[RMDB]
RNA sequence: GGGAACGACUCGAGUAGAGUCGAAAAGAUAUGGACCCGAAACGCGAAACCUACAUUCGGAAACGAAUGCUAGGGAGUAGGGUCCUAAGUCAAAAUCAUCACGUGGCGUUCGCGCCACGUGAUGAAAUCAAUCCUCAUACUUCGGUAUGAGGAUUGAAAAAGAAACAACAACAACAAC
Reactivity to 2A3 in 0.01 (KOAc 150mM, MgCl2 10mM, bicine 150mM(pH8.5), 24C), signal-to-noise 2, nucleotides 027 to 126: g020a010u050a060u100g000g010a010c000c010c010g010a080a080a000c230g060c090g190a260a070a060c000c000u000a000c000a010u010u010c010g040g010a070a040a000c000g000a020a000u030g030c140u030a000g000g040g000a010g000u020a020g000g010g000u010c000c000u020a100a010g080u020c020a010a040a010a280u040c010a000u010c000a000c010g000u020g010g060c060g040u090u090c300g000c000g010c080c020a000c010g000u010g000a000u000g010a000a000a000
Reactivity to DMS in 0.01 (KOAc 150mM, MgCl2 10mM, bicine 150mM(pH8.5), 24C), signal-to-noise 2, nucleotides 027 to 126: g010a080u000a300u010g010g000a010c000c010c000g000a040a150a120c090g030c070g000a050a060a110c010c000u010a050c010a010u000u000c000g020g000a090a090a230c020g000a000a000u000g000c300u000a000g000g000g000a090g010u010a130g000g010g010u000c010c000u000a000a040g000u010c020a090a070a080a120u000c000a000u000c010a030c000g020u000g010g000c010g000u010u030c110g010c000g000c000c000a010c000g010u010g000a000u000g000a010a050a100